The data come from the RNA Mapping Database (RMDB), library 15KREP. This 177-nucleotide RNA was probed chemically with 2A3 and DMS.
[RMDB]
RNA sequence: GGGAACGACUCGAGUAGAGUCGAAAAUUAGUGAAAAAUUGUUUGUGCGUAGUAAGGAAGAAGACGGAUUUGCCUUCUACCCUGCUUGCACUAAUGGUCAUGCUGUACCGACUCUCUUUAGACUUAAACCUUAUCGCUAGUUCGCUAGCGAUAAGGUAAAAGAAACAACAACAACAAC
Reactivity to 2A3 in 0.01 (KOAc 150mM, MgCl2 10mM, bicine 150mM(pH8.5), 24C), signal-to-noise 1, nucleotides 027 to 126: u030u000a000g030u020g100a110a070a040a050a050u020u050g000u020u040u050g010u000g000c020g000u000a000g000u020a050a010g010g030a000a010g010a000a000g000a010c060g070g110a220u090u060u300g060c000c000u000u000c000u000a000c010c000c010u010g000c010u000u010g010c000a000c000u000a000a010u020g020g000u060c030a060u250g000c030u030g020u090a180c020c000g000a000c000u050c000u000c000u010u010u060a030g010a070c010u040u080a110a070
Reactivity to DMS in 0.01 (KOAc 150mM, MgCl2 10mM, bicine 150mM(pH8.5), 24C), signal-to-noise 1, nucleotides 027 to 126: u000u020a000g020u000g000a040a100a100a060a060u000u020g010u010u010u000g010u010g010c010g010u000a000g040u000a020a030g000g000a210a030g010a000a000g010a000c000g000g000a210u010u020u010g020c020c000u010u000c000u000a030c010c000c010u000g010c000u000u010g010c000a010c000u000a010a010u000g010g000u000c060a110u020g000c020u000g000u030a070c100c010g000a010c010u000c010u000c030u000u000u000a120g000a130c030u000u000a070a160

For 2A3, 1,422 sequencing reads were counted.